Source: RMDB libraries RFM100 and RFMREP, as collected in RNAgym. An RNA of 177 nucleotides, treated with 2A3 and DMS and read out base by base. The 2A3 profile rests on 931 reads. 2A3 adducts were read by reverse transcription with SuperScript II with manganese. DMS adducts were read by reverse transcription with MarathonRT.

RNA sequence: GGGAACGACUCGAGUAGAGUCGAAAAUUAGAGGUUCGAAGGCGAUCAGAUACCGCCCUAGUUUUAACCAUAAAAGAUGCCAGCUAGCAAUUGGGUGUAGCUACUUUAAUCGAUCAUUCAUUCAGUCGCGUAGCGCUAUGUUCGCAUAGCGCUACGCAAAAGAAACAACAACAACAAC
Reactivity to 2A3 in 0.01 (KOAc 150mM, MgCl2 10mM, bicine 150mM(pH8.5), 24C), signal-to-noise 2, nucleotides 027 to 126: u080u020a040g020a090g100g000u080u220c070g010a090a040g070g000c020g040a040u080c100a100g090a180u010a080c000c020g020c050c000c000u030a040g000u010u000u000u100a020a020c070c010a040u090a080a120a000a010g050a040u120g070c040c000a010g000c030u030a020g000c090a080a040u090u110g000g020g010u050g010u000a020g050c030u030a050c040u030u060u100a050a030u030c010g100a000u030c010a040u160u000c060a000u200u000c020a010g050u090c050
Reactivity to DMS in 0.01 (KOAc 150mM, MgCl2 10mM, bicine 150mM(pH8.5), 24C), signal-to-noise 1, nucleotides 027 to 126: u000u030a000g000a170g020g030u010u000c100g060a180a110g040g050c020g010a050u000c220a080g040a140u000a150c060c010g020c060c030c010u000a030g000u000u000u000u000a100a140c030c000a090u140a060a000a160a090g020a120u000g000c090c060a070g010c100u000a130g030c020a070a020u020u090g000g000g000u010g010u000a030g010c120u000a010c040u000u000u000a020a060u000c110g000a030u000c080a110u000u010c010a140u000u020c070a030g000u020c120